[RMDB]
RNA sequence: GGGAACGACUCGAGUAGAGUCGAAAAGGGAAUGGUGGUUUACCCCGUUAUCAAAUGAUUACCGACCAAUAAUUGGCGAUACUCGUUUCGCGUUGGCUGCCUAAUUCAAGGAAUUAGCGUGCCUUCAAAGACAUCAAGAAGUUCGCUUCUUGAUGAAUCUACAAAGACUGUUCGCAGUCUUUGUAGAAAAAGAAACAACAACAACAAC
Reactivity to 2A3 in 0.01 (KOAc 150mM, MgCl2 10mM, bicine 150mM(pH8.5), 24C), signal-to-noise 4, nucleotides 027 to 156: g070g010g010a220a150u180g030g030u060g010g060u030u060u260a100c010c010c000c010g150u110u090a100u100c070a020a060a110u170g010a020u020u060a050c020c000g070a050c020c020a030a030u200a090a100u040u090g010g000c000g010a010u000a030c000u000c020g010u010u040u010c040g000c030g010u010u040g010g010c010u060g030c030c020u010a010a020u020u030c100a180a090g210g030a060a030u000u000a020g020c060g060u040g000c010c000u010u020c030a040a060a010g100a020c010a010u000c010a000a010g000a010a000g010u010u070c120g010c100u000u000c000u000u000g000a000u000g000a010a060
Reactivity to DMS in 0.01 (KOAc 150mM, MgCl2 10mM, bicine 150mM(pH8.5), 24C), signal-to-noise 2, nucleotides 027 to 156: g000g010g010a050a080u000g020g010u000g000g000u010u000u000a100c000c020c020c000g000u020u020a130u000c170a070a100a070u000g010a090u010u000a040c020c000g020a180c040c030a060a110u000a100a180u000u010g010g000c010g010a160u000a020c040u010c040g020u000u000u000c030g020c060g010u000u000g010g000c000u000g010c090c000u000a020a040u000u000c010a130a090g000g010a040a040u000u010a040g010c070g010u010g030c010c030u000u010c050a070a090a150g000a200c000a010u000c010a010a020g000a030a010g000u000u010c300g010c010u000u000c000u000u000g000a020u010g000a050a030

Source: RMDB library M2RFPK, as collected in RNAgym. This 207-nucleotide RNA was probed chemically with 2A3 and DMS. The reactions ran in a buffer of 150 mM KOAc, 10 mM MgCl2 and 150 mM bicine (pH 8.5), at 24 C. For 2A3, 2,720 sequencing reads were counted. Reactivities are given for positions 27 through 156. The DMS profile rests on 6,198 reads.